RNA sequence: GGGAACGACUCGAGUAGAGUCGAAAAGUCGCCACCUACAUGAGCUGAGGGAAGACGAGAUCUUGCCCCCCUGUAUGAGAAGUGGGGCGGGUCAGCGCGGCUGGAAGGAGUUCAAUGAUGUGUGUGGACCCACUCCACUAUUCGUAGUGGAGUGGGUAAAAGAAACAACAACAACAAC
Reactivity to 2A3 in 0.01 (KOAc 150mM, MgCl2 10mM, bicine 150mM(pH8.5), 24C), signal-to-noise 2, nucleotides 027 to 126: g040u030c010g030c030c000a000c000c030u040a030c010a130u050g040a020g000c030u020g020a120g040g110g120a060a040g030a050c040g030a040g010a050u010c060u100u300g010c000c010c000c000c030c010u040g130u150a170u180g150a130g020a130a000g000u030g020g000g000g000c010g000g000g000u030c000a060g030c090g000c020g030g010c030u000g030g060a070a000g110g060a020g020u000u090c050a150a010u080g070a120u100g100u020g060u030g020u050g060g010
Reactivity to DMS in 0.01 (KOAc 150mM, MgCl2 10mM, bicine 150mM(pH8.5), 24C), signal-to-noise 2, nucleotides 027 to 126: g020u000c040g010c030c000a140c030c040u000a020c050a050u010g000a150g000c070u000g020a170g010g000g000a100a030g010a080c040g000a200g010a040u000c000u010u020g010c000c010c000c000c030c020u000g000u010a170u020g020a140g000a070a050g010u000g020g000g000g040c000g000g000g010u010c010a120g020c070g020c040g000g020c050u000g000g000a110a100g020g000a070g010u000u000c030a040a070u010g000a130u000g020u010g020u000g020u010g010g020